[RMDB]
The data come from the RNA Mapping Database (RMDB), library OK2TRN. Structure probing data (DMS) for a 177-nucleotide construct. The RNA was probed in 150 mM KOAc, 10 mM MgCl2 and 150 mM bicine (pH 8.5) at 24 C. For DMS, 975 sequencing reads were counted.
RNA sequence: GGGAACGACUCGAGUAGAGUCGAAAAGAUUUUCUUCCUGCACCGCCUGACCUCAGUGAGCAGGGACUAUGCCGUGGUGCUGAAUCAGCUGGGAGCAAGAGACGCUAUCUCCAAGGCCCUGGAAAAGACACAUUCCACGAUUCGUCGUGGAAUGUGUAAAAGAAACAACAACAACAAC
Reactivity to DMS in 0.01 (KOAc 150mM, MgCl2 10mM, bicine 150mM(pH8.5), 24C), signal-to-noise 2, nucleotides 027 to 126: g000a130u000u000u010u010c050u000u000c030c000u000g010c050a100c040c010g020c160c040u020g020a100c120c090u020c040a050g010u030g030a270g020c070a090g000g000g000a060c140u020a110u000g000c040c070g010u000g030g030u010g030c010u000g000a080a080u000c010a070g040c070u010g020g000g020a090g010c060a100a050g000a060g030a040c300g020c110u000a070u000c030u000c030c020a070a170g000g000c030c000c000u010g000g030a050a090a080a070g000